Description
An RNA of 207 nucleotides, treated with 2A3 and read out base by base.

RNA sequence: GGGAACGACUCGAGUAGAGUCGAAAAAGCGUAGCGGUACGACGCUACGCAAGGCGCAUUUGAACUGUAUUGUACGCCUUGCAUAAAGCAAAAGUACUAAAAAAACGUGCCGUUACGACGGCACGAAAAAACAUCCAUUGGUUCGCCAAUGGAUGAAGCGGAAUUAUUACUUCGGUAAUAAUUCCGCAAAAGAAACAACAACAACAAC
Reactivity to 2A3 in 0.01 (KOAc 150mM, MgCl2 10mM, bicine 150mM(pH8.5), 24C), signal-to-noise 2, nucleotides 027 to 156: a000g030c040g000u000a000g010c040g000g010u070a010c080g090a030c030g090c000u000a000c020g000c000a000a000g020g000c000g010c030a080u100u130u300g130a210a070c070u140g070u280a090u090u120g020u060a030c020g000c000c010u000u000g000c010a050u120a200a150a020g060c000a000a010a000a040g040u050a020c030u140a050a020a050a010a000a050a050c000g020u000g010c000c000g000u020u020a060c190g000a000c000g030g000c030a010c000g010a010a000a000a020a000a000c000a000u010c000c000a010u000u000g000g000u030u040c130g070c030c000a000a000u020g010g000a000u000g000a000a000